[RMDB]
RNA sequence: GGGAACGACUCGAGUAGAGUCGAAAAGCUGAACGAAGCCCGCGCCGAAGCGGUGCAUGUGACGCCGCCGCCGCAGGCUGGCUUUGCCGAUCUGGUGGAAAAGGUUCGCCCUGCGGUCGUCAGCGUAUACCUGAUUAGCCUUCGGGCUAAUCAGGUAAAAAGAAACAACAACAACAAC
Reactivity to DMS in 0.01 (KOAc 150mM, MgCl2 10mM, bicine 150mM(pH8.5), 24C), signal-to-noise 2, nucleotides 027 to 126: g000c030u000g010a050a110c050g000a110a090g030c010c030c060g000c300g020c130c110g010a110a100g020c000g010g020u000g020c040a090u000g000u000g020a090c030g020c020c010g000c010c010g000c020c010g000c010a040g010g020c010u000g020g010c020u000u000u010g010c000c000g000a120u010c180u040g020g040u000g040g000a070a050a030a060g000g030u000u000c040g030c290c010c010u010g010c020g000g010u010c080g000u000c020a010g000c010g040u000a080
Reactivity to 2A3 in 0.01 (KOAc 150mM, MgCl2 10mM, bicine 150mM(pH8.5), 24C), signal-to-noise 1, nucleotides 027 to 126: g000c000u000g010a120a000c010g020a030a030g010c010c020c010g040c070g030c020c040g050a140a000g000c000g040g070u040g000c010a060u250g090u060g010a050c000g010c020c000g010c000c010g000c010c000g000c010a000g010g000c010u040g010g000c030u010u000u070g000c000c030g050a290u120c120u260g090g080u110g080g060a120a160a050a060g010g050u060u140c040g000c030c020c010u020g020c020g000g010u040c040g000u020c000a000g000c030g000u020a060